Annotation:
An RNA of 207 nucleotides, treated with 2A3 and DMS and read out base by base. Source: RMDB library M2RFPK, as collected in RNAgym. DMS (dimethyl sulfate) methylates the pairing face of unpaired adenines and cytosines. 2A3 adducts were read by reverse transcription with SuperScript II with manganese. The DMS profile rests on 8,038 reads. The 2A3 profile rests on 9,230 reads. Conditions: 150 mM KOAc, 10 mM MgCl2 and 150 mM bicine (pH 8.5), 24 C.

RNA sequence: GGGAACGACUCGAGUAGAGUCGAAAAGAUCUGCGCCGAUCCGAAACGCUAGCAAAGAGCCCGCAUCAUGUCGUCUCCUAACUUCGACGUGGUGAAAUACUGAGCUUAUGCGAGUAAGCCUGUUAGCAAUAGAUCAGAACGUUCGCGUUCUGAUCAACUAAUACUGAAGGUUCGCCUUCAGUAUUAGAAAAGAAACAACAACAACAAC
Reactivity to 2A3 in 0.01 (KOAc 150mM, MgCl2 10mM, bicine 150mM(pH8.5), 24C), signal-to-noise 8, nucleotides 027 to 156: g030a050u020c020u080g040c050g030c030c040g030a060u040c020c030g050a080a060a020c060g000c050u050a030g020c050a070a100a060g030a060g040c000c020c020g010c010a010u000c000a000u010g010u010c010g020u010c050u100c080c100u130a150a180c060u080u040c020g010a000c000g010u000g000g000u010g020a050a010a000u160a030c060u050g010a010g020c000u020u030a010u090g090c040g040a060g080u010a000a010g010c000c020u060g020u070u060a020g000c040a080a140u050a210g000a000u000c000a000g000a000a010c000g000u050u070c210g010c000g100u000u000c020u000g000a000u000c000a000a000
Reactivity to DMS in 0.01 (KOAc 150mM, MgCl2 10mM, bicine 150mM(pH8.5), 24C), signal-to-noise 3, nucleotides 027 to 156: g020a060u000c010u000g010c100g020c030c040g010a090u000c020c020g010a130a060a080c070g030c030u000a040g030c030a050a120a170g000a100g000c000c020c010g010c020a030u000c030a040u000g000u000c000g000u000c060u000c100c080u010a080a120c090u000u000c020g020a020c040g060u000g010g030u000g010a070a100a100u010a120c080u000g000a040g030c010u000u000a100u000g020c130g020a110g000u000a070a110g010c030c020u010g000u000u000a090g020c060a090a120u000a110g000a010u000c000a010g000a010a020c000g000u000u010c300g040c020g040u000u000c000u000g010a000u000c000a030a110